[RMDB]
RNA sequence: GGGAACGACUCGAGUAGAGUCGAAAACAAUGCAGGUUAAGCCAAAGGGAUGUCCCGACCGGAGGCAGACAAUCCAGGGAACCGGAUGUCAUCACGUUGUUGCAGUACCAGAUGGCAUCUUAAAUCCAAAAGAACACAUAGUUCGCUAUGUGUUCAACUAAUGCGAUCUGUUCGCAGAUCGCAUUAGAAAAGAAACAACAACAACAAC
Reactivity to DMS in 0.01 (KOAc 150mM, MgCl2 10mM, bicine 150mM(pH8.5), 24C), signal-to-noise 1, nucleotides 027 to 156: c060a060a010u010g000c060a090g020g030u000u000a050a180g130c000c030a020a300a240g000g000g020a050u020g000u000c000c000c050g040a300c060c020g020g020a300g020g020c020a100g000a140c100a100a110u000c040c020a100g010g060g040a140a120c070c060g000g050a020u010g020u000c030a030u010c020a190c230g000u020u010g030u010u000g020c000a010g040u000a100c070c020a170g020a030u000g010g040c000a040u000c010u010u010a040a060a060u000c060c060a040a050a100a090g000a010a040c000a010c010a010u000a000g010u000u020c300g020c000u000a010u010g000u000g000u000u000c000a000a150
Reactivity to 2A3 in 0.01 (KOAc 150mM, MgCl2 10mM, bicine 150mM(pH8.5), 24C), signal-to-noise 2, nucleotides 027 to 156: c030a030a120u230g030c030a040g150g030u210u180a190a020g020c000c000a020a010a020g060g000g020a040u100g020u000c000c010c000g000a010c010c010g000g000a020g000g050c000a000g020a030c000a030a090u070c050c080a020g030g000g020a010a040c020c050g020g000a010u020g000u040c000a000u000c000a010c160g000u020u020g000u030u030g050c080a070g040u110a060c080c000a030g010a010u000g000g000c000a000u000c000u000u040a020a030a010u040c030c000a000a050a010a030g000a010a000c000a000c000a010u000a000g020u060u070c200g030c090u000a000u000g000u000g000u000u000c000a000a000